RNA sequence: GGGAACGACUCGAGUAGAGUCGAAAAGAUAUGGAUCACUGCCAAUUGCAACAGCCGUUAUCGGAAACGAUAACGGACAUGCAGAUGGUUGAUCCUAAGUCAAAGUUGCGCAGUUCGCUGCGCAACACCUACACAUGUACUUCGGUACAUGUGUAGGAAAAGAAACAACAACAACAAC
Reactivity to DMS in 0.01 (KOAc 150mM, MgCl2 10mM, bicine 150mM(pH8.5), 24C), signal-to-noise 4, nucleotides 027 to 126: g000a020u000a300u000g000g000a030u000c000a070c300u010g020c010c000a020a130u020u020g020c000a050a060c300a210g000c000c010g010u000u000a010u000c000g000g000a070a050a120c000g000a010u000a000a010c010g000g010a000c080a170u000g000c030a050g010a080u000g000g010u010u020g010a010u000c000c010u020a030a100g000u000c030a050a080a110g000u000u000g010c000g000c000a040g000u010u030c300g020c000u010g010c000g010c000a010a000c000a110
Reactivity to 2A3 in 0.01 (KOAc 150mM, MgCl2 10mM, bicine 150mM(pH8.5), 24C), signal-to-noise 6, nucleotides 027 to 126: g010a020u060a020u110g000g000a000u010c010a030c140u150g020c020c040a080a180u300u120g040c300a300a090c070a300g030c000c000g000u010u000a010u000c000g000g000a030a020a010c000g000a000u000a000a000c010g010g010a000c000a020u220g000c010a000g020a100u040g030g000u020u030g000a000u000c010c000u010a100a010g010u000c060a130a090a150g000u010u010g000c010g000c020a000g000u030u100c210g100c210u000g010c000g000c000a000a000c000a000
An RNA of 177 nucleotides, treated with DMS and 2A3 and read out base by base.
For DMS, 4,861 sequencing reads were counted.
As a SHAPE reagent, 2A3 marks flexible, mostly unpaired nucleotides at the ribose 2'-OH.